[RMDB]
RNA sequence: GGGAACGACUCGAGUAGAGUCGAAAAAGAGGUGCAGUACGCUGCACCUCACGGCAGGCCGCCGGCCGUAACAGGCGGCCAUCGGAUCACGCUCCGGUGAAAGGACGCCACCGUACGCGGUGGCGAACACUAACGUCGAAUUCGUUCGACGUUAGUGAAAAGAAACAACAACAACAAC
Reactivity to 2A3 in 0.01 (KOAc 150mM, MgCl2 10mM, bicine 150mM(pH8.5), 24C), signal-to-noise 4, nucleotides 027 to 126: a000g000a000g000g000u000g000c000a000g010u060a030c290g050c130u000g010c000a000c000c000u000c000a000c010g000g000c000a010g120g000c000c000g000c000c010g000g000c010c000g080u090a020a020c040a120g010g000c000g000g000c000c000a000u000c000g010g000a010u080c070a020c300g110c100u000c000c000g010g010u000g020a050a010a000g090g030a010c010g010c000c000a000c000c010g020u020a010c270g010c020g100g000u000g000g000c000g000a000a000
Reactivity to DMS in 0.01 (KOAc 150mM, MgCl2 10mM, bicine 150mM(pH8.5), 24C), signal-to-noise 3, nucleotides 027 to 126: a050g000a020g040g000u000g010c000a010g010u000a130c300g030c000u000g010c000a000c010c010u000c000a020c040g000g020c030a040g040g000c000c020g000c000c000g010g000c000c040g000u010a030a000c010a130g020g030c000g000g000c000c000a000u000c000g010g000a020u000c160a110c300g000c300u000c000c010g000g020u000g000a030a170a050g010g000a200c020g010c030c000a020c020c000g040u010a120c200g030c020g000g030u000g000g000c030g030a020a060
Chemical mapping of a 177-nucleotide RNA with 2A3 and DMS. 2A3 adducts were read by reverse transcription with SuperScript II with manganese. Source: RMDB libraries RFM100 and RFMREP, as collected in RNAgym. Conditions: 150 mM KOAc, 10 mM MgCl2 and 150 mM bicine (pH 8.5), 24 C. The 2A3 profile rests on 7,000 reads. For DMS the reverse transcriptase was MarathonRT.